[RMDB]
RNA sequence: GGGAACGACUCGAGUAGAGUCGAAAAGAUCGAUCAGACCAUGCUGCGCAGUGUCGAUAGCACUGAUCCGCUGCGGUACCGACAUGAGUACCAGUACGUCGCGUACGUGACUAGGACGUCUAGAUCACAGUCACAUAAGUUUCGACUUAUGUGACUGAAAAGAAACAACAACAACAAC
Reactivity to DMS in 0.01 (KOAc 150mM, MgCl2 10mM, bicine 150mM(pH8.5), 24C), signal-to-noise 9, nucleotides 027 to 126: g010a100u000c090g010a050u000c050a070g000a060c020c050a110u000g010c020u000g010c030g000c010a040g020u010g010u000c120g020a100u000a100g010c080a080c110u000g010a090u000c080c060g010c030u000g010c030g010g020u000a040c280c030g000a110c150a060u000g010a140g010u000a040c020c010a060g000u000a020c040g010u000c040g020c250g010u000a020c050g010u000g000a030c020u000a100g000g020a110c100g000u000c020u010a120g010a030u000c020a240
Reactivity to 2A3 in 0.01 (KOAc 150mM, MgCl2 10mM, bicine 150mM(pH8.5), 24C), signal-to-noise 9, nucleotides 027 to 126: g040a100u150c070g000a010u040c030a000g020a030c020c010a070u110g000c010u040g010c030g000c010a030g020u020g080u190c100g110a110u160a080g050c040a020c070u050g020a080u050c030c030g000c020u030g010c020g010g030u040a040c020c030g130a150c100a210u180g030a060g050u070a050c000c000a010g010u020a010c030g010u020c040g020c090g220u100a020c040g010u030g070a050c010u040a090g040g030a040c040g010u010c010u040a050g000a020u020c010a000